[RMDB]
RNA sequence: GGGAACGACUCGAGUAGAGUCGAAAAUUGGAAAGAUGAUUCUCUUGUUGGCAAUGGAGAGGAAAAAGUGAGCUGUACAAUAAAUAUCAUUCCAACAUGGGACAGCAAGAAGAAAUACAUGCAUAUAUCUCUAAAUCAUAUUCGUAUGAUUUAGAGAAAAAGAAACAACAACAACAAC
Reactivity to 2A3 in 0.01 (KOAc 150mM, MgCl2 10mM, bicine 150mM(pH8.5), 24C), signal-to-noise 5, nucleotides 027 to 126: u090u040g090g040a130a050a040g080a050u060g010a030u090u000c010u000c000u040u020g040u010u020g010g000c040a050a040u050g050g030a190g030a140g050g080a060a100a010a010a040g130u090g040a030g020c090u070g080u140a050c060a050a130u130a160a110a020u180a040u070c030a040u010u030c020c010a010a030c010a070u040g020g050g110a060c000a000g000c020a010a030g080a060a010g040a020a090a010u150a080c030a020u070g060c080a020u150a030u040a120
Reactivity to DMS in 0.01 (KOAc 150mM, MgCl2 10mM, bicine 150mM(pH8.5), 24C), signal-to-noise 5, nucleotides 027 to 126: u010u010g010g010a080a080a120g020a050u000g010a160u010u000c010u000c010u000u000g020u000u010g010g010c110a110a040u000g010g010a090g020a150g010g010a040a060a080a100a140g010u000g000a090g020c080u000g010u010a080c130a080a090u010a040a070a080u000a060u010c060a090u000u000c010c020a060a090c070a040u000g000g020g010a060c070a030g010c020a050a040g000a070a070g000a030a030a050u000a080c070a030u010g010c110a060u010a110u010a120